[RMDB]
RNA sequence: GGGAACGACUCGAGUAGAGUCGAAAAACUUUGCGCCCGUUUUAGCUUGGCAAAUCUCCAAAGCGCCAUUAACAAUAUGGCGCUCAUCCAUAGACACAACAUCACUCACACGCUGCCCCGUCAGGUAGGCAAGGUCCAUCGCAUCCCUGAGCGUUUGGUAGCGAAAAAUUUUCGAAUUUUUCGCUACAAAAGAAACAACAACAACAAC
Reactivity to 2A3 in 0.01 (KOAc 150mM, MgCl2 10mM, bicine 150mM(pH8.5), 24C), signal-to-noise 2, nucleotides 027 to 156: a020c030u090u090u090g010c080g020c000c010c030g040u010u010u020u140a020g050c070u020u050g030g000c000a020a130a300u030c100u000c070c060a130a110a070g000c000g000c010c000a030u070u160a190a140c080a130a050u110a030u110g000g000c010g000c000u000c010a030u000c020c030a000u040a100g050a080c040a010c030a110a130c010a080u100c050a000c070u070c020a030c030a020c100g050c040u030g020c030c040c000c000g040u050c000a010g000g070u060a020g010g060c030a010a060g050g030u000c000c010a070u050c050g000c030a030u060c000c000c000u040g080a080g010c010g040u050u080u000g070